[RMDB]
The record gives the reactivity of an RNA of 177 nucleotides to 2A3 and DMS. DMS adducts were read by reverse transcription with MarathonRT.
RNA sequence: GGGAACGACUCGAGUAGAGUCGAAAACUUCAUGUGGGGAGGAGCGCAAUGCUUUUGUGACACUGAAAACACCCAGAUGAGUGAAGCCUACGUAGAGAGGUCAUCAGACUGUGCUGUUGAUCAUGCGCUACGCUUACAAAUUCGUUUGUAAGCGUAGAAAAGAAACAACAACAACAAC
Reactivity to 2A3 in 0.01 (KOAc 150mM, MgCl2 10mM, bicine 150mM(pH8.5), 24C), signal-to-noise 4, nucleotides 027 to 126: c010u100u070c010a020u070g020u050g170g000g030g000a090g030g050a090g030c010g000c090a070a080u270g110c140u040u160u070u040g060u040g040a020c010a030c120u110g060a050a060a040a050c060a040c000c000c010a040g010a100u030g000a010g050u040g050a040a020g040c000c000u040a060c070g040u080a040g070a030g000a020g200g010u000c010a030u030c000a020g110a140c110u150g050u180g130c010u000g010u090u020g020a030u030c020a040u140g010c010g000
Reactivity to DMS in 0.01 (KOAc 150mM, MgCl2 10mM, bicine 150mM(pH8.5), 24C), signal-to-noise 9, nucleotides 027 to 126: c060u010u010c010a010u000g020u000g010g000g010g010a110g010g000a050g000c040g020c130a080a050u010g010c100u000u000u000u000g020u000g010a140c050a050c070u000g000a080a060a080a140c140a140c020c010c010a060g000a050u000g000a060g010u000g010a080a130g000c020c010u000a080c110g010u010a060g010a170g010a090g010g000u000c010a020u000c030a040g010a150c170u010g020u000g010c010u000g000u000u000g010a060u000c040a090u010g010c120g010
For DMS, 13,899 sequencing reads were counted.